RNA sequence: GGGAACGACUCGAGUAGAGUCGAAAAACUUUAUUUUCGUCGAUUUACAAGAAAACAGAGGUAAAGCCAACGCACUCAAUCAAGGCAUUAAACAGGCUUCAUAUGAUUAUGUAAUGUGCUUGGAUGCGUUAUAUAAAUAGUUCGCUAUUUAUAUAACAAAAGAAACAACAACAACAAC
Reactivity to 2A3 in 0.01 (KOAc 150mM, MgCl2 10mM, bicine 150mM(pH8.5), 24C), signal-to-noise 4, nucleotides 027 to 126: a010c010u040u030u020a040u030u050u020u020c030g020u020c020g040a060u020u080u230a160c070a100a080g070a080a100a030a010c040a020g040a020g030g050u100a090a050a020g030c000c000a010a020c060g010c010a010c010u050c030a010a040u030c010a020a000g010g000c010a010u030u120a050a080a060c060a030g090g000c000u060u030c060a090u140a060u250g050a060u040u100a060u120g080u050a100a070u080g010u020g060c000u010u000g020g020a040u070g050c020
Reactivity to DMS in 0.01 (KOAc 150mM, MgCl2 10mM, bicine 150mM(pH8.5), 24C), signal-to-noise 8, nucleotides 027 to 126: a090c020u000u000u010a040u000u000u000u010c050g010u010c120g010a180u010u010u000a110c150a110a170g000a050a030a050a040c070a060g010a050g010g010u000a050a060a100g010c020c010a040a030c130g010c020a020c040u000c090a050a030u010c030a050a050g000g000c010a020u010u000a040a070a130c290a090g000g000c020u000u000c130a070u010a090u000g000a040u000u000a070u000g010u010a050a040u000g010u000g000c040u000u000g010g010a070u000g000c140